Conditions: 150 mM KOAc, 10 mM MgCl2 and 150 mM bicine (pH 8.5), 24 C. An RNA of 177 nucleotides, treated with DMS and 2A3 and read out base by base. For 2A3 the reverse transcriptase was SuperScript II with manganese.
RNA sequence: GGGAACGACUCGAGUAGAGUCGAAAAAAUAAAAGUCUUUAGUGGGCCACUUUUGGUAAGCAGAACUGGCGAUGUGGGAUGAACCAAACGCAGAGUUAAGGUGCCGGAAUAUACACUUAUCAGACACCUCUUUUGCCUAAUUCGUUAGGCAAAAGAGAAAAGAAACAACAACAACAAC
Reactivity to DMS in 0.01 (KOAc 150mM, MgCl2 10mM, bicine 150mM(pH8.5), 24C), signal-to-noise 2, nucleotides 027 to 126: a080a030u010a060a020a090a080g000u010c030u020u000u030a080g040u010g010g020g020c040c150a100c160u000u010u010u000g000g040u000a060a040g040c000a050g010a030a020c050u000g010g000c060g000a040u030g020u000g000g010g000a170u000g000a110a090c040c020a010a070a070c060g000c070a080g010a060g010u000u010a080a070g000g000u000g010c010c010g000g000a040a030u010a080u020a120c090a040c050u010u010a030u020c070a080g000a070c060a030c080
Reactivity to 2A3 in 0.01 (KOAc 150mM, MgCl2 10mM, bicine 150mM(pH8.5), 24C), signal-to-noise 4, nucleotides 027 to 126: a000a000u240a010a080a000a020g020u010c050u030u070u050a040g020u100g000g020g030c050c030a060c040u030u020u060u110g040g020u050a030a020g040c010a010g030a180a030c020u030g040g000c040g050a100u080g030u080g030g040g050a100u110g070a030a030c020c010a050a010a010c010g020c040a010g030a000g130u040u030a050a020g040g020u020g020c010c000g020g050a040a010u140a000u040a080c040a010c060u120u120a100u180c020a010g020a040c030a050c040

The 2A3 profile rests on 2,815 reads. The data come from the RNA Mapping Database (RMDB), library RFM100.